[RMDB]
Structure probing data (2A3 and DMS) for a 177-nucleotide construct.
For 2A3 the reverse transcriptase was SuperScript II with manganese.
Source: RMDB library OK2TRN, as collected in RNAgym.
The reactions ran in a buffer of 150 mM KOAc, 10 mM MgCl2 and 150 mM bicine (pH 8.5), at 24 C.
RNA sequence: GGGAACGACUCGAGUAGAGUCGAAAAUGGAUCUGCCGUGCCCUCGUAAUCUCGAAGGAUCACUACGCUUGGAGCCCAUGGCCGAUGCAGACCUCGUCAUGACCGGAACCGUGCUCACCGUCGACGAUCAACAAGCUCCAUUCGUGGAGCUUGUUGAAAAAGAAACAACAACAACAAC
Reactivity to 2A3 in 0.01 (KOAc 150mM, MgCl2 10mM, bicine 150mM(pH8.5), 24C), signal-to-noise 2, nucleotides 027 to 126: u040g040g010a040u000c030u020g010c040c030g020u070g040c010c010c000u010c040g060u050a150a100u010c040u020c140g120a150a060g170g010a090u030c030a040c140u110a020c010g030c030u030u070g060g020a030g040c010c030c050a070u060g060g000c010c040g010a030u100g000c000a000g050a140c010c000u000c020g030u030c010a050u140g020a030c020c000g000g050a020a020c030c010g040u090g070c030u030c030a040c020c010g040u030c030g010a040c010g030a050
Reactivity to DMS in 0.01 (KOAc 150mM, MgCl2 10mM, bicine 150mM(pH8.5), 24C), signal-to-noise 2, nucleotides 027 to 126: u010g010g020a070u000c030u000g000c030c040g050u010g020c050c010c030u000c060g000u020a060a080u000c110u000c000g000a150a120g010g020a070u000c080a070c090u000a070c070g020c200u000u000g010g000a140g030c070c100c030a020u000g000g030c020c040g000a040u000g000c030a040g000a130c060c010u010c080g030u000c050a090u010g010a080c040c050g030g020a070a080c060c060g000u000g000c050u010c050a100c060c040g020u000c070g000a060c080g000a100